[RMDB]
RNA sequence: GGGAACGACUCGAGUAGAGUCGAAAAGACACGAUCAAUACUACUAUCGGAGUGAAACAAGGGAUCUAAAGAAGAAGAGAGGCUAGACUAUAUUAGUAACAAGCAAACCUUGUAUGUGUAUCUCCAAAUAUUUUGGAGAUAAAUACCAAUUAGAAGGCGUUCUUUUAAUGUUCGCAUUAAAAGAACGAAAAGAAACAACAACAACAAC
Reactivity to 2A3 in 0.01 (KOAc 150mM, MgCl2 10mM, bicine 150mM(pH8.5), 24C), signal-to-noise 4, nucleotides 027 to 156: g060a010c010a010c070g080a050u100c040a100a110u070a250c050u060a010c010u070a090u120c050g070g000a050g040u090g040a020a020a010c000a020a020g020g000g000a000u050c050u300a240a060a060g090a110a000g030a070a000g000a010g010a000g010g000c000u000a000g000a010c010u020a030u010a020u300u050a010g010u030a050a120c050a060a000g010c010a050a020a130c020c000u040u050g020u060a050u020g210u020g040u010a000u000c000u000c000c000a010a050a050u240a140u090u260u050u010g000g000a000g000a000u000a000a000a010u000a000c000c000a000a020u040u020a050g020a050a000g030g010
Reactivity to DMS in 0.01 (KOAc 150mM, MgCl2 10mM, bicine 150mM(pH8.5), 24C), signal-to-noise 2, nucleotides 027 to 156: g010a090c030a090c050g010a080u010c040a120a160u020a130c070u010a090c080u000a100u000c050g000g000a160g040u010g000a100a040a030c010a020a040g010g010g020a060u010c070u000a090a080a110g020a160a080g000a030a060g000a080g030a040g010g000c020u000a040g000a120c110u000a080u000a070u020u000a100g010u010a080a070c060a000a070g000c040a060a060a100c100c040u000u010g000u000a070u010g030u000g010u000a020u000c000u020c000c010a000a030a120u000a160u000u000u000u000g010g000a030g000a020u000a000a020a030u000a040c030c030a030a080u000u000a080g010a020a040g010g020